[RMDB]
Conditions: 150 mM KOAc, 10 mM MgCl2 and 150 mM bicine (pH 8.5), 24 C. The record gives the reactivity of an RNA of 177 nucleotides to DMS. DMS adducts were read by reverse transcription with MarathonRT.
RNA sequence: GGGAACGACUCGAGUAGAGUCGAAAAAGUGACGCCUGCUUGCAUUAUUCUAAUCUGUGAGCUUCUUUCAAUAAAUCCUCAAUGCAAAAAUGUAUUGGACUGUUGGAGACAUUUCCUACUGAUUUGGACAGAAGGAAUCGUUCGCGAUUCCUUCUGUAAAAGAAACAACAACAACAAC
Reactivity to DMS in 0.01 (KOAc 150mM, MgCl2 10mM, bicine 150mM(pH8.5), 24C), signal-to-noise 1, nucleotides 027 to 126: a140g050u000g010a060c130g020c110c080u000g050c010u020u010g000c040a020u010u000a080u000u010c150u010a090a120u010c110u010g010u000g020a020g000c080u010u000c040u000u030u020c050a040a040u000a020a140a150u000c010c050u010c100a020a020u000g000c000a020a090a090a070a210u000g040u000a020u000u000g000g000a040c190u010g000u000u000g020g020a050g000a080c110a140u010u000u010c010c010u010a110c180u040g000a110u000u010u010g010g020
Values are in units of 0.01, from 0 to 300, in steps of 10.